[RMDB]
RNA sequence: GGGAACGACUCGAGUAGAGUCGAAAACUGGUCUAUCAAUGAAGAAUUCGAAGUGAUUUGUACCAAACUUCAAUUCUUGGAUUGGUGCAAUGACAUAUUGGACAAAUGACAGUAAACCAUUAAAAUAAUCAUCGCAUUAUUUCGAUAAUGCGAUGAUAAAAGAAACAACAACAACAAC
Reactivity to 2A3 in 0.01 (KOAc 150mM, MgCl2 10mM, bicine 150mM(pH8.5), 24C), signal-to-noise 6, nucleotides 027 to 126: c010u060g070g150u050c030u050a040u080c030a060a030u090g080a040a030g040a070a040u080u040c140g030a020a010g040u060g100a160u070u070u290g140u110a090c050c000a100a070a020c070u040u010c020a030a080u070u030c020u030u040g060g070a020u000u000g030g010u020g010c000a010a020u090g030a070c050a060u250a070u040u070g050g000a010c070a060a090a070u150g020a000c010a020g020u070a020a060a040c020c020a060u110u300a070a130a030a060u250a040
Reactivity to DMS in 0.01 (KOAc 150mM, MgCl2 10mM, bicine 150mM(pH8.5), 24C), signal-to-noise 3, nucleotides 027 to 126: c000u010g020g000u000c010u000a190u040c090a010a010u010g020a060a010g000a000a090u000u030c160g000a010a030g000u010g000a230u040u110u070g010u030a110c150c200a090a050a050c030u000u000c010a010a060u000u010c120u000u000g000g020a010u000u020g000g000u000g000c000a000a040u020g000a100c230a050u070a010u060u000g010g010a100c110a060a050a060u000g000a120c020a030g010u000a030a130a200c040c020a050u040u040a070a050a060a200u010a050